[RMDB]
RNA sequence: GGGAACGACUCGAGUAGAGUCGAAAAAGCAUGCCGGAUUUUUCAAGUGGUAUGCGGGACACAUCUACGCGUACUUCGAUGUGCGUGUGUGUCACAGCAGGAGUUGAGUAGGUGAGCUCGGUUUGCACCGCUCUGGAGACCAUCACGGGUUUUGCGGACCAACAUAGAGAUUCGUCUCUAUGUUGGUAAAAGAAACAACAACAACAAC
Reactivity to DMS in 0.01 (KOAc 150mM, MgCl2 10mM, bicine 150mM(pH8.5), 24C), signal-to-noise 3, nucleotides 027 to 156: a110g010c010a030u010g020c030c020g020g020a120u000u000u010u010u010c080a120a110g030u000g010g020u000a030u000g010c000g040g010g010a040c030a050c020a020u000c040u000a110c010g020c000g020u010a040c030u000u020c180g010a070u010g030u000g010c020g010u000g010u000g020u010g010u000c030a050c040a100g010c050a110g010g010a100g010u000u000g010a090g020u000a080g050g020u000g000a090g040c020u000c040g020g020u000u010u000g030c080a140c040c010g010c020u000c040u000g030g010a120g000a070c050c010a070u000c070a110c060g010g000g010u010u000u000u000g010c060g030g020
Reactivity to 2A3 in 0.01 (KOAc 150mM, MgCl2 10mM, bicine 150mM(pH8.5), 24C), signal-to-noise 6, nucleotides 027 to 156: a000g010c020a020u020g020c010c020g150g040a140u130u110u030u080u160c070a100a040g020u050g080g010u060a040u040g010c000g010g020g000a010c010a000c000a040u050c120u210a030c030g010c010g040u040a030c030u090u160c110g190a230u150g010u020g020c010g010u030g030u010g020u030g030u050c010a000c030a100g060c040a000g010g040a010g050u070u030g020a020g030u080a060g030g050u030g040a030g000c040u030c060g080g000u040u090u140g050c080a040c010c010g020c010u020c060u080g020g000a050g010a030c030c020a030u060c050a030c100g000g030g010u030u070u090u150g020c020g030g030

An RNA of 207 nucleotides, treated with DMS and 2A3 and read out base by base. It was measured as part of the RMDB library OK3TST. The 2A3 profile rests on 4,388 reads. Reactivities are given for positions 27 through 156. Conditions: 150 mM KOAc, 10 mM MgCl2 and 150 mM bicine (pH 8.5), 24 C. The DMS profile rests on 12,286 reads.